[RMDB]
The record gives the reactivity of an RNA of 207 nucleotides to DMS and 2A3. It was measured as part of the RMDB library RNAMAK.
RNA sequence: GGGAACGACUCGAGUAGAGUCGAAAAGGGGUCUUUCGGUCCACUUGGAUUUAUGUACGAGGGACAGAUGUAAAUGUGGCUGAAGCCUCCACGGCCACAUUUACAUCUGUCCUCCCCACCGUACAUUGUCAGUGGACCCGGAAAGACGGAGGCACCCGUUUAUAUAACGGUUCGCCGUUAUAUAAACAAAAGAAACAACAACAACAAC
Reactivity to DMS in 0.01 (KOAc 150mM, MgCl2 10mM, bicine 150mM(pH8.5), 24C), signal-to-noise 2, nucleotides 027 to 156: g000g020g000g010u000c000u000u000u000c000g030g010u010c000c000a020c020u000u000g050g020a050u000u000u000a000u010g020u000a020c040g020a300g020g020g030a030c000a010g030a040u010g000u000a020a010a010u000g020u000g000g020c040u000g020a050a040g020c040c020u000c000c030a300c050g010g000c010c010a010c010a000u000u000u010a000c000a000u000c050u000g010u000c000c000u010c280c040c030c000a300c110c020g010u000a030c000a020u000u000g000u000c000a070g020u000g000g000a030c000c010c120g000g000a040a050a030g020a030c000g000g040a040g030g020c020a060c020c020c070
Reactivity to 2A3 in 0.01 (KOAc 150mM, MgCl2 10mM, bicine 150mM(pH8.5), 24C), signal-to-noise 1, nucleotides 027 to 156: g020g020g020g000u010c010u020u000u010c000g010g010u020c020c010a010c030u090u220g250g020a020u240u300u100a020u050g000u000a000c010g010a020g000g000g000a000c000a000g000a000u000g000u000a000a000a020u010g000u000g010g000c020u040g030a030a030g000c020c000u000c000c040a050c030g000g000c040c040a000c000a000u000u000u000a010c000a000u000c000u000g000u000c000c000u010c000c000c000c000a010c000c000g000u000a000c000a000u000u010g030u040c100a040g000u010g000g010a020c030c000c010g130g030a010a030a000g000a000c000g000g000a000g000g010c010a040c000c000c000